[RMDB]
RNA sequence: GGGAACGACUCGAGUAGAGUCGAAAAUAAAACAUCAGCUUUGCUUGGUUCAUCGCAAAGUUCAUAAGCACUAAGGUGCCCUAGCAUGAUCUCACUAUCGACUAAAUUUUUAUUACAACCUAAAGACUCCCCUAUAUUAGUUCGCUAAUAUAGGGGAAAAAGAAACAACAACAACAAC
Reactivity to 2A3 in 0.01 (KOAc 150mM, MgCl2 10mM, bicine 150mM(pH8.5), 24C), signal-to-noise 6, nucleotides 027 to 126: u090a000a050a010a030c060a070u060c030a000g020c020u050u030u050g010c040u050u080g110g050u250u140c030a070u090c070g000c050a080a030a030g020u020u010c020a040u100a190a060g000c030a020c060u040a140a020g110g020u020g010c010c000c020u030a020g010c050a030u090g050a090u070c010u050c060a050c030u100a060u150c020g090a050c070u130a020a040a210u100u080u020u060u040a100u110u110a040c040a060a150c010c020u140a100a060a030g000a040c040
Reactivity to DMS in 0.01 (KOAc 150mM, MgCl2 10mM, bicine 150mM(pH8.5), 24C), signal-to-noise 3, nucleotides 027 to 126: u050a040a100a030a090c130a070u000c130a100g000c030u000u000u000g000c020u020u020g000g020u000u040c070a060u020c170g050c100a050a050a090g000u010u030c060a050u020a080a060g030c030a050c040u000a110a130g030g000u000g020c110c040c040u020a080g000c050a030u000g020a100u000c030u000c030a100c060u000a070u000c050g010a100c030u010a030a060a180u010u010u010u030u000a030u040u020a170c100a090a100c060c030u010a080a060a070g000a140c170